[RMDB]
RNA sequence: GGGAACGACUCGAGUAGAGUCGAAAACGACGACACAAACGGAGAACACUGCAAAUCACAAAUUAAAGCAAACCUUUUUCUUUAUAGAACUUUUCCGUCUGUAAAGGCCAAGAUGUAAUCGCACUGGGUCCUAUCCCCAUUUCGAUGGGGAUAGGACAAAAGAAACAACAACAACAAC
Reactivity to 2A3 in 0.01 (KOAc 150mM, MgCl2 10mM, bicine 150mM(pH8.5), 24C), signal-to-noise 2, nucleotides 027 to 126: c010g140a000c010g030a010c000a010c010a050a180a000c020g020g000a060g010a040a000c010a000c050u070g070c030a000a050a110u130c060a090c030a000a160a020u050u100a090a070a060g050c060a020a010a170c000c020u010u030u080u010u000c010u030u040u010a060u010a060g060a070a030c010u040u030u080u010c020c040g000u000c000u020g010u050a000a000a090g010g010c020c000a080a010g040a040u060g020u090a060a060u050c090g000c050a010c000u060g000g060
Reactivity to DMS in 0.01 (KOAc 150mM, MgCl2 10mM, bicine 150mM(pH8.5), 24C), signal-to-noise 1, nucleotides 027 to 126: c030g000a040c150g060a140c100a010c140a000a160a190c260g000g000a100g050a110a070c050a000c090u000g010c020a030a110a140u040c140a000c140a050a060a100u000u060a000a030a010g000c220a050a000a130c000c050u000u000u000u000u000c000u000u000u050a030u000a010g000a080a060c040u000u000u030u020c070c190g000u010c080u010g000u000a000a000a020g000g000c070c070a030a080g040a130u000g010u000a110a050u000c000g030c030a020c020u000g060g020
This 177-nucleotide RNA was probed chemically with 2A3 and DMS. The DMS profile rests on 866 reads. Source: RMDB library OK1LIB, as collected in RNAgym. The reactions ran in a buffer of 150 mM KOAc, 10 mM MgCl2 and 150 mM bicine (pH 8.5), at 24 C.